[RMDB]
RNA sequence: GGGAACGACUCGAGUAGAGUCGAAAAUUAUAGUUGCAAACGACGACAACUACGCUUUAGCGGCUUAAUUCCCGCUUUCGCUUACCUAGAUUUGUCUGUGGGUUUACCGUAAGCGACAUUAACACAGAAUCGCUGGUUAACGCGUCCGCUGUUAAUCGUAGUCCUCAAGGUUCGCCUUGAGGACUACAAAAGAAACAACAACAACAAC
Reactivity to 2A3 in 0.01 (KOAc 150mM, MgCl2 10mM, bicine 150mM(pH8.5), 24C), signal-to-noise 1, nucleotides 027 to 156: u210u050a090u000a010g010u000u020g000c010a040a110a080c060g140a020c030g040a030c080a030a080c090u060a020c020g070c050u050u160u000a070g030c000g000g050c030u030u160a020a020u220u030c020c000c000g000c000u020u040u060c120g000c010u030u000a000c000c040u040a030g000a090u000u000u090g000u070c040u060g030u000g030g010g000u020u010u000a100c070c010g020u000a010a010g000c030g130a030c000a060u290u300a140a040c040a000c000a000g000a080a000u140c050g000c040u020g070g000u020u010a010a000c010g000c000g020u020c140c190g020c100u060g040u000u020a040a060u040c080